[RMDB]
About this RNA: Chemical mapping of a 177-nucleotide RNA with 2A3.
RNA sequence: GGGAACGACUCGAGUAGAGUCGAAAAGUGCUCAUCUACGCCGUGGCCAUCACCAACUCGCUGGCCGAACAGGUGGCGCAUCGCACGCCGAUGACCCCAGGGCUGCGUGCGCUGCUGAGUCUGGGGGGGAAAAUCCUGCUUUCGAGCAGGAUUUUCCAAAAGAAACAACAACAACAAC
Reactivity to 2A3 in 0.01 (KOAc 150mM, MgCl2 10mM, bicine 150mM(pH8.5), 24C), signal-to-noise 1, nucleotides 027 to 126: g060u050g000c000u000c030a030u030c110u150a020c090g020c000c000g120u120g000g000c040c030a080u100c020a020c010c080a060a140c000u010c080g070c020u000g020g130c000c000g000a070a090c020a000g000g010u010g100g000c000g000c020a000u110c050g020c010a040c080g000c010c010g070a090u110g090a100c000c000c000c000a000g000g000g050c010u010g000c000g000u010g000c000g010c000u010g020c020u050g010a000g040u010c020u140g000g000g000g000g000